[RMDB]
RNA sequence: GGGAACGACUCGAGUAGAGUCGAAAAUUAGUAAAUCAUUUCAUAAGAAAAAGCAAACAAUAGAUGCUUUGAAGGACGUAUCAUUUACGGUCAAUCGCAAUGAUAUUUUUGGUGUGAUUGGAUAUAGUACGCUGGUGUUAUUCGUAACACCAGCGUAAAAAGAAACAACAACAACAAC
Reactivity to DMS in 0.01 (KOAc 150mM, MgCl2 10mM, bicine 150mM(pH8.5), 24C), signal-to-noise 3, nucleotides 027 to 126: u020u040a140g030u030a060a020a000u000c020a020u000u000u000c030a110u010a070a030g030a050a050a030a000a010g040c000a030a060a060c270a060a220u040a110g000a150u020g030c000u010u000u000g000a090a090g020g000a150c200g040u000a000u000c040a050u000u000u020a050c000g000g000u040c300a090a150u040c040g030c300a020a000u000g000a060u000a000u010u060u000u000u010g000g000u010g020u000g000a020u000u000g000g000a100u020a060u000a040g040
Reactivity to 2A3 in 0.01 (KOAc 150mM, MgCl2 10mM, bicine 150mM(pH8.5), 24C), signal-to-noise 1, nucleotides 027 to 126: u080u030a050g080u080a000a070a020u070c040a020u140u170u000c150a160u150a060a100g060a110a160a000a020a000g000c000a090a000a300c000a000a190u210a110g080a060u040g050c000u000u000u020g070a120a060g130g030a000c000g000u000a000u000c010a020u030u030u030a000c000g040g040u070c130a040a020u070c000g000c090a000a040u000g020a040u010a050u020u110u020u000u080g020g000u020g000u010g000a020u010u090g010g000a000u060a060u000a100g200

Source information
An RNA of 177 nucleotides, treated with DMS and 2A3 and read out base by base. The reactions ran in a buffer of 150 mM KOAc, 10 mM MgCl2 and 150 mM bicine (pH 8.5), at 24 C. Values cover nucleotides 27 to 126. For 2A3 the reverse transcriptase was SuperScript II with manganese. Source: RMDB library OK1LIB, as collected in RNAgym.